The record gives the reactivity of an RNA of 177 nucleotides to DMS. The reactions ran in a buffer of 150 mM KOAc, 10 mM MgCl2 and 150 mM bicine (pH 8.5), at 24 C.
[RMDB]
RNA sequence: GGGAACGACUCGAGUAGAGUCGAAAAUGACAGCAAGACCCACAUACAGUAGUCCGCGAAACGGACUUCCACGUUGAACCAAUUCGGCUGCAACGGGUUCGACGAUGCUGGUGAGAGCCUGUUGACACAGCUGCGUAAAUUUCGAUUUACGCAGCUGAAAAGAAACAACAACAACAAC
Reactivity to DMS in 0.01 (KOAc 150mM, MgCl2 10mM, bicine 150mM(pH8.5), 24C), signal-to-noise 1, nucleotides 027 to 126: u000g010a060c010a010g020c010a100a080g000a080c020c010c000a140c060a080u010a300c110a030g000u000a010g030u000c010c010g030c030g030a030a110a230c000g010g000a020c000u000u000c100c100a080c040g000u000u000g000a010a050c000c010a100a070u000u010c050g000g020c080u000g010c040a060a070c300g000g000g010u000u000c000g030a060c010g000a100u000g000c060u010g000g010u000g000a160g000a060g010c080c000u010g030u000u000g020a120c140a190